[RMDB]
RNA sequence: GGGAACGACUCGAGUAGAGUCGAAAAGACGGCGGUAUCCGGGGACAACGUGACGGUCGUGUGCGCGGCGGUGCUGUUCUCGGUCCGGCUGAUUGGCCCGCGCGUGGCCGUGGUGUUCGUGGCAGUGACUCACGGCUAUGUUCGCAUAGCCGUGAGUAAAAGAAACAACAACAACAAC
Reactivity to DMS in 0.01 (KOAc 150mM, MgCl2 10mM, bicine 150mM(pH8.5), 24C), signal-to-noise 2, nucleotides 027 to 126: g000a150c170g000g020c000g010g000u020a100u030c000c030g020g000g000g000a030c070a040a040c050g000u000g000a160c050g010g030u010c000g000u030g020u030g030c100g000c070g000g000c050g000g010u010g030c030u010g010u010u000c010u010c010g000g050u010c020c020g000g000c010u010g000a120u010u020g000g020c020c010c000g000c060g000c090g020u010g030g000c040c000g000u010g000g000u010g000u020u010c100g000u000g010g000c040a050g040u010g000
Reactivity to 2A3 in 0.01 (KOAc 150mM, MgCl2 10mM, bicine 150mM(pH8.5), 24C), signal-to-noise 2, nucleotides 027 to 126: g070a000c020g020g060c040g020g020u060a070u120c000c000g000g000g000g000a000c000a040a010c060g040u110g300a030c060g180g060u040c020g000u100g090u140g100c190g010c050g020g000c020g010g030u070g010c010u020g020u080u020c030u000c000g010g010u010c000c000g060g020c010u050g030a160u050u070g090g000c000c000c000g000c020g000c030g050u130g040g000c000c000g040u010g000g030u040g050u040u030c080g030u060g030g050c050a030g040u080g150